[RMDB]
RNA sequence: GGGAACGACUCGAGUAGAGUCGAAAAGUCCUCAGGUUCGCCUGAGGACAAAUAAACUUGAGAAAAGAAGGACCGUACUCAAGAAAAUACGCAAACAAACAAAAAGCCGACAGUUCGCUGUCGGCAACAUAUUCGGUUAGUUCGCUAACCGAAUAUGAAAAGAAACAACAACAACAAC
Reactivity to DMS in 0.01 (KOAc 150mM, MgCl2 10mM, bicine 150mM(pH8.5), 24C), signal-to-noise 2, nucleotides 027 to 126: g000u000c000c020u000c000a000g000g010u000u000c260g030c000c000u010g000a000g010g000a000c000a000a070a050u000a020a170a220c000u000u020g050a030g030a170a040a150a130g000a160a080g000g000a150c060c040g010u000a110c020u000c000a000a050g000a090a040a110a050u000a080c160g000c130a050a120a060c140a150a010a110c040a030a100a250a170a140g030c000c000g040a030c000a030g020u000u030c280g020c000u000g030u000c000g010g000c030a010a010
Reactivity to 2A3 in 0.01 (KOAc 150mM, MgCl2 10mM, bicine 150mM(pH8.5), 24C), signal-to-noise 2, nucleotides 027 to 126: g000u010c000c010u010c000a010g010g030u020u040c130g020c070c000u000g000a020g000g010a010c000a000a000a000u000a000a020a000c000u010u010g020a010g030a020a210a040a030g080a090a070g160g030a040c060c070g040u100a060c030u010c000a000a000g020a060a180a000a010u170a030c050g030c110a040a130a100c010a020a180a040c020a010a150a070a030a040g060c040c000g020a000c010a020g020u050u080c110g060c150u000g000u020c010g000g000c000a000a000